[RMDB]
RNA sequence: GGGAACGACUCGAGUAGAGUCGAAAAGUUGUUCACAGAUGAAGCAGCUGUCCUUCAUCGCACGACGGCUAACUCGUGCUGUGAACAAGUCACGUGAGUCGAUCAGUUAGCCGUCUGAUCGGUCAGAGGACAGCUGAGCUCUGACACUCACGUGUCGCGAUCGUAGAUAGUUCGCUAUCUACGAUCGAAAAGAAACAACAACAACAAC
Reactivity to DMS in 0.01 (KOAc 150mM, MgCl2 10mM, bicine 150mM(pH8.5), 24C), signal-to-noise 2, nucleotides 027 to 156: g000u000u010g000u000u000c010a100c040a130g000a120u000g010a090a130g080c030a060g020c010u000g020u010c010c040u000u000c080a110u000c080g010c190a160c110g000a040c020g010g020c030u010a030a090c010u000c020g040u010g000c010u030g020u000g000a050a090c070a040a040g010u010c010a000c020g030u000g000a070g010u000c050g010a100u000c050a010g040u010u000a050g020c030c030g040u000c010u000g000a070u000c090g040g060u000c080a090g000a110g000g000a040c010a040g020c030u020g010a040g000c080u000c100u000g010a180c060a060c020u000c060a020c070g000u010g010u030c070g030
Reactivity to 2A3 in 0.01 (KOAc 150mM, MgCl2 10mM, bicine 150mM(pH8.5), 24C), signal-to-noise 4, nucleotides 027 to 156: g010u020u000g000u000u010c040a020c050a060g060a110u090g080a140a040g010c020a010g000c020u010g000u000c000c000u040u110c040a120u130c020g000c040a020c090g000a000c000g000g020c010u010a000a000c000u020c020g070u110g040c050u030g000u000g020a030a030c060a010a020g120u050c000a010c030g050u070g100a030g040u090c070g100a160u140c110a010g010u010u020a000g010c000c000g000u000c010u030g070a120u100c060g020g070u080c040a040g010a000g070g010a010c000a000g000c010u000g020a000g000c000u010c020u050g010a010c000a000c030u110c000a050c100g010u000g010u000c010g000